[RMDB]
RNA sequence: GGGAACGACUCGAGUAGAGUCGAAAAUGGUGGUGCAUGGCCGUUCUUAGUUCGUGGAGUGAUUUCUCUGGUUAAUUCCGAUAACGAACGAGGCUCAAAUAUAUUAAAUAGAUAUCUUCAGGAUUAUGGCAAACAAUCAAUUCGUUGAUUGUUUGCCAAAAGAAACAACAACAACAAC
Reactivity to 2A3 in 0.01 (KOAc 150mM, MgCl2 10mM, bicine 150mM(pH8.5), 24C), signal-to-noise 1, nucleotides 027 to 126: u040g000g000u030g000g000u000g010c070a010u040g110g000c000c000g000u020u010c000u000u100a090g000u000u070c000g000u020g000g030a170g000u130g070a210u000u140u000c000u000c000u060g050g060u130u080a060a060u240u060c010c000g090a290u060a010a000c000g000a000a000c000g000a030g000g000c000u000c000a190a270a000u260a000u100a000u010u290a090a030a010u060a000g010a000u030a060u040c000u100u180c170a000g030g010a010u080u060a010u170